[RMDB]
RNA sequence: GGGAACGACUCGAGUAGAGUCGAAAAAUCAUCGGAAGAUCAGCUAUUAGAAGAGAAAGAUCAGUUAAGUCCUUUGGACCUGAUCAGCUUGAUACAAGAACUACUGAUUUCAACUUCUUUGGCUUAAAAAAGGCCACAGAGUUCGCUCUGUGGCCAACUCAUAACGUGUCUUCGGACACGUUAUGAGAAAAGAAACAACAACAACAAC
Reactivity to 2A3 in 0.01 (KOAc 150mM, MgCl2 10mM, bicine 150mM(pH8.5), 24C), signal-to-noise 2, nucleotides 027 to 156: a000u070c060a040u060c010g120g070a080a000g020a170u130c050a010g010c000u040a050u240u110a260g000a010a000g020a000g010a020a050a050g030a010u000c000a000g000u050u120a080a010g010u010c020c000u090u170u210g020g020a020c000c050u050g030a060u090c030a000g060c000u070u100g010a020u090a150c030a070a060g010a030a020c020u080a010c010u070g010a070u020u040u010c060a080a070c030u020u020c000u010u030u050g000g000c000u000u030a000a020a010a120a120a030g000g000c000c000a000c000a000g020a010g090u110u080c090g050c080u010c000u000g000u000g010g000c000c000a000a000
This 207-nucleotide RNA was probed chemically with 2A3. The 2A3 profile rests on 1,080 reads. The reactions ran in a buffer of 150 mM KOAc, 10 mM MgCl2 and 150 mM bicine (pH 8.5), at 24 C. Values cover nucleotides 27 to 156.